This 207-nucleotide RNA was probed chemically with 2A3. For 2A3 the reverse transcriptase was SuperScript II with manganese. The RNA was probed in 150 mM KOAc, 10 mM MgCl2 and 150 mM bicine (pH 8.5) at 24 C. High 2A3 reactivity points to a flexible backbone, as in loops and unpaired stretches. The data come from the RNA Mapping Database (RMDB), library RNAMAK.

RNA sequence: GGGAACGACUCGAGUAGAGUCGAAAAUUCCGAGUUCGCUCGGAAAAAAAACCUUUGUGACGCGUAUACAGCGAUGAAGUGGAUCUGGAACCCAUUGGGUUCCUCCAUGGAGCUGUAUGAUCGUCACUCUGGUAAAAAAACCCCAUUCGUGGGGUAAGUAGAUCACUGAUUUCGAUCAGUGAUCUACAAAAGAAACAACAACAACAAC
Reactivity to 2A3 in 0.01 (KOAc 150mM, MgCl2 10mM, bicine 150mM(pH8.5), 24C), signal-to-noise 2, nucleotides 027 to 156: u010u000c000c000g010a000g000u050u130c230g060c050u030c020g030g000a030a020a000a000a000a000a000a000c020c000u040u010u010g000u000g000a000c000g020c000g040u030a020u010a000c000a050g010c070g270a300u020g000a010a020g010u020g000g000a080u180c180u300g070g000a000a010c000c010c030a260u150u300g010g000g020u000u010c000c010u000c010c000a010u010g000g010a000g010c000u000g000u010a000u000g010a050u020c010g010u040c010a020c000u060c000u000g020g030u090a110a010a000a000a010a000a100c020c090c090c000a000u050u070c130g050u050g000g010g000g010u020a030a010